[RMDB]
RNA sequence: GGGAACGACUCGAGUAGAGUCGAAAAUUCGAGCUAAAGAAGGUAUUACAGACGGACUUGUAAGAAUUUCUGUAGGUAUUGAAGAUACUGAAGAUUUAGUCGAUGAUUUAAAACAAGCACUAGAUACUAAAUGAUUAGUGUUCGCACUAAUCAUUUAAAAAGAAACAACAACAACAAC
Reactivity to DMS in 0.01 (KOAc 150mM, MgCl2 10mM, bicine 150mM(pH8.5), 24C), signal-to-noise 8, nucleotides 027 to 126: u010u010c010g010a090g010c020u000a020a060a050g010a120a170g000g000u010a030u010u010a060c020a030g000a060c070g010g000a080c060u010u010g010u010a090a090g010a100a110u020u000u000c010u010g010u020a080g010g010u020a050u030u030g020a110a100g000a080u010a030c010u000g000a070a100g020a130u000u000u010a010g010u010c040g010a070u010g000a110u010u020u030a040a050a080a100c090a050a080g000c140a040c090u010a040g010a070u020a060c130
Reactivity to 2A3 in 0.01 (KOAc 150mM, MgCl2 10mM, bicine 150mM(pH8.5), 24C), signal-to-noise 7, nucleotides 027 to 126: u060u020c010g010a040g040c020u050a020a040a030g060a020a030g040g010u040a030u030u060a040c030a020g030a040c040g090g020a020c030u070u080g010u110a080a050g070a110a060u030u040u030c020u030g040u050a050g000g040u050a100u040u160g120a100a040g030a070u010a020c000u020g050a050a020g080a180u030u050u050a020g010u020c050g010a020u070g020a020u060u140u240a070a090a020a020c050a030a020g050c030a020c110u060a060g020a150u080a070c030